[RMDB]
RNA sequence: GGGAACGACUCGAGUAGAGUCGAAAAGUACGGGAGACGUAGUUCUUCAAUCACAUGACGCCUAGGGGAAAGUCCCCGGAUCUCGGGUAGAAAGUGCCGUGCGCUACUAUGGCGUGCAAUAAUCCCGGACUACGGGGUUAUUCGUAACCCCGUAGUCAAAAGAAACAACAACAACAAC
Reactivity to DMS in 0.01 (KOAc 150mM, MgCl2 10mM, bicine 150mM(pH8.5), 24C), signal-to-noise 4, nucleotides 027 to 126: g000u010a040c210g000g000g000a030g010a090c050g010u030a080g030u020u010c010u000u000c020a070a130u010c060a090c060a070u020g000a140c150g000c020c030u000a110g020g010g000g020a130a120a150g000u000c000c000c000c000g030g010a060u010c090u010c050g000g000g030u000a060g000a060a070a050g030u010g000c150c120g000u010g010c040g000c020u000a060c190u020a110u040g010g000c000g020u000g000c020a050a060u020a120a100u000c010c000c000g010
Reactivity to 2A3 in 0.01 (KOAc 150mM, MgCl2 10mM, bicine 150mM(pH8.5), 24C), signal-to-noise 6, nucleotides 027 to 126: g110u070a030c030g020g020g020a040g010a010c060g090u120a070g060u150u000c000u030u040c030a020a100u120c020a040c010a140u150g040a030c020g010c010c030u090a060g020g000g000g060a030a180a110g110u100c000c000c010c010g010g020a080u110c100u040c030g030g000g000u040a050g110a070a140a000g050u060g020c040c020g040u060g040c030g000c030u070a100c020u070a100u190g030g000c000g020u040g000c020a010a050u080a100a020u030c000c000c000g020

Structure probing data (DMS and 2A3) for a 177-nucleotide construct. The RNA was probed in 150 mM KOAc, 10 mM MgCl2 and 150 mM bicine (pH 8.5) at 24 C.